[RMDB]
Source information: This 207-nucleotide RNA was probed chemically with 2A3 and DMS.
RNA sequence: GGGAACGACUCGAGUAGAGUCGAAAACGCGGCUUCGGCCGCGACAGAUCCUAAGUCGCUGAGGAAGUUGGGAGACGUGGCCGUCGGAAACGACGGAAUCGUCAUCGAUCAACUUCUACCCACCAGCGAUAUGGAAGGUGACGACGUUCGCGUCGAAAUAACUCUUCAAGUUCGCUUGAAGAGUUAUAAAAGAAACAACAACAACAAC
Reactivity to 2A3 in 0.01 (KOAc 150mM, MgCl2 10mM, bicine 150mM(pH8.5), 24C), signal-to-noise 6, nucleotides 027 to 156: c010g000c000g000g020c020u090u140c300g190g010c010c010g000c000g000a000c000a010g220a080u060c000c000u030a100a050g020u000c000g000c000u010g010a020g010g020a020a000g000u000u000g030g020g010a040g000a000c000g030u080g140g080c000c000g000u010c010g000g030a070a070a050c010g000a000c000g010g030a010a040u070c000g010u010c030a190u180c060g090a110u090c000a000a000c000u010u000c010u010a030c030c020c010a080c010c000a000g000c020g010a000u020a020u060g020g020a060a090g070g090u140g050a030c010g000a010c010g030u060u230c260g030c010g100u020c000g010a060a050
Reactivity to DMS in 0.01 (KOAc 150mM, MgCl2 10mM, bicine 150mM(pH8.5), 24C), signal-to-noise 4, nucleotides 027 to 156: c010g020c000g010g040c000u000u010c270g050g000c000c010g030c010g010a030c040a090g010a160u000c000c000u000a110a250g020u000c010g030c000u000g000a120g010g000a020a030g020u000u010g010g010g020a300g020a030c010g020u000g020g010c000c000g000u000c010g010g010a080a120a260c020g000a010c000g000g010a000a030u000c000g020u000c000a090u010c080g010a300u000c010a010a030c010u000u000c020u000a020c020c010c020a300c090c000a040g010c000g010a060u000a130u000g010g000a090a110g000g020u000g010a160c010g000a040c000g000u000u000c140g020c060g010u000c000g020a090a140

For 2A3, 6,377 sequencing reads were counted. Source: RMDB library RNAMAK, as collected in RNAgym. Reactivities are given for positions 27 through 156.